Source: RMDB library VIROID, as collected in RNAgym. The record gives the reactivity of an RNA of 207 nucleotides to 2A3. The RNA was probed in 150 mM KOAc, 10 mM MgCl2 and 150 mM bicine (pH 8.5) at 24 C. For 2A3, 1,255 sequencing reads were counted. For 2A3 the reverse transcriptase was SuperScript II with manganese.

RNA sequence: GGGAACGACUCGAGUAGAGUCGAAAACUUCCCUUCCGGGUUCUCUUCGAAUCGGCGUGGCUCAUCUCGGCAGAGGCGGCGAUCCUCAGUACUCUUACUCUUUUCUUGAAAGAGGAGACUGCUGGACGCCCCGCCCGAGUCCGAGCAUGGGCCAGGUGCUAAUAUUAACGUUCGCGUUAAUAUUAGCAAAAGAAACAACAACAACAAC
Reactivity to 2A3 in 0.01 (KOAc 150mM, MgCl2 10mM, bicine 150mM(pH8.5), 24C), signal-to-noise 3, nucleotides 027 to 156: c010u040u020c000c000c000u040u040c110c010g110g030g030u080u030c150u050c080u300u210c150g030a040a020u010c010g000g040c130g120u060g000g000c000u000c000a000u010c000u000c000g000g000c030a020g060a180g110g000c010g000g000c000g110a300u000c000c000u020c000a020g010u120a300c010u000c020u140u140a250c000u070c020u000u200u150u080c140u170u300g130a090a020a010g000a010g000g000a000g020a000c000u000g050c050u000g000g010a000c000g030c010c030c000c000g000c000c010c000g030a040g120u040c000c010g000a000g000c020a000u000g000g010g000c000c000a000g000g000u010